RNA sequence: GGGAACGACUCGAGUAGAGUCGAAAAGAUAUGGAGCGUCCAAGGGAGAUGUCCAUCGGAAACGAUGGAUACAUCGACGAUCUUGAGACGCUCCUAAGUCAAAAUCUGGACCCUUCGGGGUCCAGAAGUUUAUAUGUUGGUUCGCCAACAUAUAAACAAAAGAAACAACAACAACAAC
Reactivity to DMS in 0.01 (KOAc 150mM, MgCl2 10mM, bicine 150mM(pH8.5), 24C), signal-to-noise 2, nucleotides 027 to 126: g000a030u000a300u010g020g000a010g020c010g020u000c010c000a030a010g020g000g030a040g010a010u020g000u010c000c010a000u000c000g000g010a110a120a170c000g020a010u000g010g000a150u010a040c040a020u000c000g000a120c280g000a050u010c000u000u000g000a280g030a020c000g030c010u010c000c000u000a000a110g000u000c020a170a070a230a120u000c000u000g000g000a000c010c000c010u000u010c300g040g010g010g030u010c000c000a000g000a020a080
Reactivity to 2A3 in 0.01 (KOAc 150mM, MgCl2 10mM, bicine 150mM(pH8.5), 24C), signal-to-noise 1, nucleotides 027 to 126: g000a000u030a010u180g000g000a000g000c000g000u000c010c010a000a010g030g030g010a070g000a000u010g000u030c000c000a000u010c010g000g020a010a020a010c010g000a000u050g040g000a030u050a060c000a000u000c000g230a280c030g000a030u030c000u040u220g120a300g000a110c010g020c010u000c000c010u010a010a010g010u000c000a020a010a010a300u000c000u010g020g000a000c000c010c000u010u040c300g090g050g000g000u030c000c000a000g000a000a010